[RMDB]
RNA sequence: GGGAACGACUCGAGUAGAGUCGAAAACACACACCACGCAGCUGACCACGGCAAGCUGUCCGUUAUCUGCACCGCAGACAAGGACAUGCGUAUGCUGCCCGGUCGUCACGUCAUCUGGAAAACCAAGCAGCUGAUCGACGUUCCAUUCGGGACGUACGAUGUCAUACGGUUUCGACCGUAUGACAUCAAAAGAAACAACAACAACAAC
Reactivity to DMS in 0.01 (KOAc 150mM, MgCl2 10mM, bicine 150mM(pH8.5), 24C), signal-to-noise 2, nucleotides 027 to 156: c120a070c040a140c070a110c000c070a010c040g000c070a080g020c020u010g000a050c030c050a140c030g030g060c000a080a180g000c000u000g010u000c010c000g000u010u000a050u000c000u020g010c000a300c260c200g030c000a000g010a020c010a080a140g000g010a050c000a000u030g010c000g010u000a120u000g050c010u000g000c010c020c080g000g020u000c010g000u000c040a070c020g030u000c030a030u000c030u000g000g010a100a050a140a120c050c040a050a110g020c030a080g010c020u000g020a090u000c040g010a030c000g000u000u000c020c000a300u010u000c170g010g030g020a020c010g060u010a030c100
Reactivity to 2A3 in 0.01 (KOAc 150mM, MgCl2 10mM, bicine 150mM(pH8.5), 24C), signal-to-noise 7, nucleotides 027 to 156: c100a000c010a000c000a030c020c020a040c050g040c020a040g020c010u100g030a040c020c010a060c080g000g000c020a030a010g000c010u010g010u000c000c000g090u110u200a030u000c010u010g010c060a170c300c290g000c020a010g010a030c050a030a060g000g000a000c020a030u270g000c000g020u060a110u070g000c020u020g010c000c040c010g020g010u010c030g050u030c010a010c100g070u040c010a090u000c030u030g050g030a060a050a040a070c030c030a100a040g020c020a010g000c020u040g050a110u130c050g040a020c010g020u020u000c010c010a110u230u270c130g000g000g010a010c010g000u040a040c050